RNA sequence: GGGAACGACUCGAGUAGAGUCGAAAAGGGUAGUCAGUAUAUGAGUCUCCUCGCAUGAGAAUGUGAGGUACAUGACGUACUGACUACGUUAUGUAUGGUGUAUGGAAACAUACACCAAGACUCAUAAGGUAGUGCUACAUUUCGAUGUAGCGCUACCAAAAGAAACAACAACAACAAC
Reactivity to 2A3 in 0.01 (KOAc 150mM, MgCl2 10mM, bicine 150mM(pH8.5), 24C), signal-to-noise 9, nucleotides 027 to 126: g120g020g030u110a050g050u100c100a040g070u100a080u010a010u170g020a000g000u000c000u000c000c010u000c000g010c000a010u030g040a020g060a170a010u010g000u010g000a000g000g000u000a000c000a010u030g010a000c010g000u010a020c110u130g130a050c050u010a000c000g000u000u010a010u010g010u000a010u010g000g000u000g000u000a000u000g000g010a030a030a010c000a000u000a000c000a000c000c000a000a000g000a000c010u000c010a010u010a070a030
Reactivity to DMS in 0.01 (KOAc 150mM, MgCl2 10mM, bicine 150mM(pH8.5), 24C), signal-to-noise 6, nucleotides 027 to 126: g010g010g010u010a020g010u010c080a100g000u020a130u020a010u000g000a010g010u000c000u000c000c000u000c000g000c000a010u000g010a190g010a160a020u000g000u000g010a010g010g020u000a000c010a020u000g000a010c030g020u000a020c230u020g000a150c300u000a000c000g010u000u000a000u000g000u000a000u000g000g010u000g000u000a000u000g000g010a140a080a160c000a000u000a000c000a000c010c000a000a000g000a010c000u000c000a000u010a040a130
The record gives the reactivity of an RNA of 177 nucleotides to 2A3 and DMS.
High DMS reactivity at an A or C suggests that its Watson-Crick edge is free.
The DMS profile rests on 27,364 reads.
Conditions: 150 mM KOAc, 10 mM MgCl2 and 150 mM bicine (pH 8.5), 24 C.
Reactivities are given for positions 27 through 126.
2A3 adducts were read by reverse transcription with SuperScript II with manganese.
DMS adducts were read by reverse transcription with MarathonRT.
Source: RMDB library OK1LIB, as collected in RNAgym.